[RMDB]
RNA sequence: GGGAACGACUCGAGUAGAGUCGAAAAGUGAGUAAGAAGGAUAAAUUGAUCUCGAGAAUCAUGACGAUCUACAAUUACAUGAAAUUUAUCUACGCUUUUAUUCGUGAACAACUUAAAGGCGAAGAUCGACCUGCAUGUGCUUCGGCACAUGCAGGUCAAAAGAAACAACAACAACAAC
Reactivity to 2A3 in 0.01 (KOAc 150mM, MgCl2 10mM, bicine 150mM(pH8.5), 24C), signal-to-noise 2, nucleotides 027 to 126: g240u290g070a110g000u000a010a020g050a140a000g160g000a000u040a010a040a110u270u100g040a050u000c180u050c100g130a150g050a000a200u120c000a100u270g040a210c050g000a040u010c000u090a100c130a210a060u120u080a050c020a000u080g200a150a150a150u130u240u150a060u010c000u000a000c050g000c000u010u000u000u010a070u020u010c050g050u030g000a000a040c070a050a000c090u000u000a000a000a000g010g000c020g150a000a000g000a000u040c040
The record gives the reactivity of an RNA of 177 nucleotides to 2A3. For 2A3, 488 sequencing reads were counted. The reactions ran in a buffer of 150 mM KOAc, 10 mM MgCl2 and 150 mM bicine (pH 8.5), at 24 C.